This 177-nucleotide RNA was probed chemically with DMS. For DMS, 652 sequencing reads were counted. The RNA was probed in 150 mM KOAc, 10 mM MgCl2 and 150 mM bicine (pH 8.5) at 24 C. Source: RMDB library OK2TRN, as collected in RNAgym.
RNA sequence: GGGAACGACUCGAGUAGAGUCGAAAAGAUUUACGGCGGGAAAGGUCCCGGGUGCGGCACCUACCGAAACGCGCCGAGGUCCCGGGUGCGGCACCCACCGAAAGGCGCGGACACCGCCGGAAAGAAAACCACUCAUUAGGUUCGCCUAAUGAGUGGUAAAAGAAACAACAACAACAAC
Reactivity to DMS in 0.01 (KOAc 150mM, MgCl2 10mM, bicine 150mM(pH8.5), 24C), signal-to-noise 1, nucleotides 027 to 126: g000a140u000u040u000a020c040g000g000c000g000g000g000a030a180a300g010g000u000c030c000c240g000g030g030u000g000c040g000g010c010a030c000c020u000a050c080c060g000a020a090a060c100g000c030g010c000c050g060a160g020g000u000c300c120c020g000g000g020u010g000c000g000g000c040a000c020c020c010a260c040c000g000a060a060a270g010g030c200g020c190g000g000a040c010a180c000c020g020c000c000g020g000a030a000a010g000a100a150a130